[RMDB]
RNA sequence: GGGAACGACUCGAGUAGAGUCGAAAAGAUAUGGAAGCCUCGUAGAACUACGAGCCCGUGUCGGAAACGACACGGAGCUCGCUACGAGGGCUUCCUAAGUCAAAAGCCCAUACUUCGGUAUGGGCAAUCUUAAGUGAGAGUUCGCUCUCACUUAAGAAAAAGAAACAACAACAACAAC
Reactivity to DMS in 0.01 (KOAc 150mM, MgCl2 10mM, bicine 150mM(pH8.5), 24C), signal-to-noise 3, nucleotides 027 to 126: g000a080u000a300u010g010g010a010a020g000c000c000u000c000g020u000a010g010a140a070c210u010a300c030g010a010g010c010c000c010g020u010g000u000c010g010g010a110a060a240c010g010a030c000a000c010g010g000a040g030c010u000c000g000c010u000a000c000g010a040g010g020g010c010u000u000c000c010u010a010a100g000u010c040a080a170a190a210g010c000c000c000a020u000a010c000u000u020c220g010g010u000a010u000g010g010g030c010a000a010
Reactivity to 2A3 in 0.01 (KOAc 150mM, MgCl2 10mM, bicine 150mM(pH8.5), 24C), signal-to-noise 2, nucleotides 027 to 126: g000a030u080a060u170g020g000a010a000g010c010c010u010c000g000u020a030g030a240a140c270u300a100c300g000a000g000c000c010c000g030u000g030u030c020g010g010a090a070a070c020g000a000c010a000c010g020g020a010g000c000u000c020g000c040u010a000c000g000a030g000g010g000c000u000u000c000c000u000a040a010g020u000c040a000a030a150a300g000c010c010c000a000u010a000c010u040u110c300g110g000u010a010u040g000g000g000c000a000a010
Notes:
The data come from the RNA Mapping Database (RMDB), library TTRDES. Structure probing data (DMS and 2A3) for a 177-nucleotide construct. Values are in units of 0.01, from 0 to 300, in steps of 10. DMS adducts were read by reverse transcription with MarathonRT. 2A3 adducts were read by reverse transcription with SuperScript II with manganese. For 2A3, 4,057 sequencing reads were counted. For DMS, 3,242 sequencing reads were counted. Values cover nucleotides 27 to 126. Conditions: 150 mM KOAc, 10 mM MgCl2 and 150 mM bicine (pH 8.5), 24 C.